RNA sequence: GGGAACGACUCGAGUAGAGUCGAAAAUUCUUAGUACGCGCGUAGUUGCAGGCAUUCCGGGUGCAGCAACUGACGCGGAAGACUUUUCCCAGAGUGUGCGCUUCAACUGGCGUGCUGAGUAGUGCACGAAUUGCACGUACGUUCGCGUACGUGCAAAGGGAAAUUUAGAUUUCGAUCUAAAUUUCCCAAAAGAAACAACAACAACAAC
Reactivity to 2A3 in 0.01 (KOAc 150mM, MgCl2 10mM, bicine 150mM(pH8.5), 24C), signal-to-noise 3, nucleotides 027 to 156: u020u000c000u000u010a000g020u020a000c020g000c010g000c020g050u010a010g020u000u000g000c050a120g050g070c030a060u120u070c110c230g280g000g030u020g000c030a020g000c010a020a030c010u080g120a040c000g000c000g000g000a020a010g100a040c020u120u090u050u030c040c000c000a000g040a040g070u140g000u010g000c020g000c000u050u100c070a190a180c090u030g060g000c020g030u020g000c010u000g000a020g020u060a010g000u040g010c000a000c020g010a060a140u010u020g000c000a010c000g000u000a000c000g010u010u070c190g000c000g060u000a000c010g000u000g000c010a000a000a000
Reactivity to DMS in 0.01 (KOAc 150mM, MgCl2 10mM, bicine 150mM(pH8.5), 24C), signal-to-noise 1, nucleotides 027 to 156: u010u000c020u010u010a000g020u000a100c020g000c050g020c010g030u010a030g020u000u000g040c000a170g010g000c020a010u000u020c020c300g000g000g170u010g010c030a300g000c000a030a050c010u000g000a030c000g010c010g020g000a060a110g000a100c070u000u030u000u010c000c010c000a210g020a130g020u010g030u000g000c010g000c000u000u000c030a100a130c060u000g050g030c170g000u000g020c020u000g010a110g010u000a060g040u000g000c000a010c030g030a060a190u000u000g000c020a040c000g000u020a000c000g020u000u010c300g050c010g030u000a010c020g000u010g000c000a000a000a050